[RMDB]
RNA sequence: GGGAACGACUCGAGUAGAGUCGAAAAUGAAACAUGGUUACCAUAACCUAUGGGACAAGGUAGCCAUGAAAAGUGCCAUAGGUUAUAAAGCUGAGCGUUAGGAAAAACCUAAUGCUCAGCAAAAAAAGAUACCAACACUGUUCGCAGUGUUGGUAUCAAAAGAAACAACAACAACAAC
Reactivity to DMS in 0.01 (KOAc 150mM, MgCl2 10mM, bicine 150mM(pH8.5), 24C), signal-to-noise 1, nucleotides 027 to 126: u000g030a200a140a210c070a000u000g000g000u000u000a020c010c010a140u000a070a150c010c000u000a030u000g000g020g020a100c110a150a110g030g000u010a000g000c020c000a030u000g000a080a080a040a110g030u020g030c030c000a080u000a000g010g010u040u020a080u000a070a080a110g000c000u000g000a030g040c000g010u000u000a000g000g030a060a090a020a210a100c000c010u000a000a000u000g000c000u030c020a020g010c000a000a000a030a040a010a010a090